[RMDB]
RNA sequence: GGGAACGACUCGAGUAGAGUCGAAAAAUCGGGGCAGUAUCGACAUACAGGCUACGCAGAAUGUCUGCCGCAGCGGUGACGCAAAUCGGACGGCCGGUCAGUUUAAAGUGGUUAUCGCGGCGAUUGACCGGUGUUAUACGUUCGCGUAUAACACCGGAAAAGAAACAACAACAACAAC
Reactivity to 2A3 in 0.01 (KOAc 150mM, MgCl2 10mM, bicine 150mM(pH8.5), 24C), signal-to-noise 1, nucleotides 027 to 126: a020u070c020g000g020g010g050c000a030g030u070a060u120c060g080a010c030a040u150a030c060a020g090g040c010u040a020c060g000c010a000g030a180a070u100g090u070c030u010g010c000c000g050c010a000g000c000g000g090u020g000a000c020g060c070a030a090a050u090c000g070g000a000c000g080g000c040c020g010g030u040c000a000g000u000u040u290a210a080a010g040u030g090g000u100u060a060u240c000g010c000g000g000c030g020a080u010u130g030a050
Reactivity to DMS in 0.01 (KOAc 150mM, MgCl2 10mM, bicine 150mM(pH8.5), 24C), signal-to-noise 2, nucleotides 027 to 126: a060u010c030g000g000g010g020c090a030g020u020a020u000c080g000a100c090a020u020a070c130a140g010g020c060u010a080c090g020c040a070g010a130a170u010g020u000c010u000g020c050c050g020c060a070g010c000g000g020u000g020a080c020g030c030a030a040a090u010c090g030g010a090c080g020g000c080c070g030g000u000c030a040g000u000u020u040a040a140a120g010u000g000g020u000u000a020u020c070g020c020g010g020c220g010a030u010u010g000a120